[RMDB]
RNA sequence: GGGAACGACUCGAGUAGAGUCGAAAAUUUUGCCAGUUCGCUCCAGGUUUCCCCGGGGAUCCCUGAAGCGCUCCUCCGAGCCGCCUUCUUUUUUCUUUUCUGCUCAGGAGGUCAGGUGUGAACCACAGGAACCACGAGUUUAGUUCCGAGGAACCAACACGUAUGACAUGUUCGCAUGUCAUACGUGAAAAGAAACAACAACAACAAC
Reactivity to 2A3 in 0.01 (KOAc 150mM, MgCl2 10mM, bicine 150mM(pH8.5), 24C), signal-to-noise 1, nucleotides 027 to 156: u170u300u280u130g130c030c070a050g070u000u010c000g000c000u000c050c000a080g010g000u060u040u080c020c010c040c040g020g000g020g050a020u050c000c010c000u010g030a090a090g160c010g150c230u150c000c010u000c020c010g020a000g060c000c020g110c130c020u120u200c070u160u300u070u050u190u150c020u130u180u220u100c050u040g000c000u000c000a110g000g000a000g000g000u050c000a000g040g040u160g010u010g220a000a010c000c000a000c090a110g010g010a010a000c010c000a010c030g000a010g010u050u070u230a020g000u030u030c010c010g020a110g040g000a070a130c080c050a020a040
Structure probing data (2A3) for a 207-nucleotide construct. Reactivities are given for positions 27 through 156. The reactions ran in a buffer of 150 mM KOAc, 10 mM MgCl2 and 150 mM bicine (pH 8.5), at 24 C.